[RMDB]
RNA sequence: GGGAACGACUCGAGUAGAGUCGAAAAAAGCUAUCAGUGACUAGAAAAUGUGGUUGAUGAUGGUGAUGAUGAUGAUGUUGAUGAGGAGAACUACCAUUGAUGGAGCACUCACACACUGUGCCAGCACUAUUCUAGGUUCUUAACAUACAUUAAUUACCCCUACGAGAGGGUUCGCCCUCUCGUAGGGAAAAGAAACAACAACAACAAC
Reactivity to 2A3 in 0.01 (KOAc 150mM, MgCl2 10mM, bicine 150mM(pH8.5), 24C), signal-to-noise 1, nucleotides 027 to 156: a000a020g050c040u040a030u110c040a100g030u000g020a040c070u010a010g010a030a120a000a000u150g040u070g000g170u080u080g030a080u060g000a010u010g030g050u010g030a110u010g000a000u000g000a000u020g000a000u040g010u010u000g010a010u040g000a000g030g000a040g010a030a060c040u060a040c040c070a120u100u030g000a000u080g110g060a060g000c000a010c020u060c000a060c000a000c000a030c130u040g010u000g000c010c000a000g040c000a000c030u110a150u100u010c010u090a030g000g020u080u060c000u190u140a070a010c010a070u080a080c040a010u200u250a020a000u260u220a090c000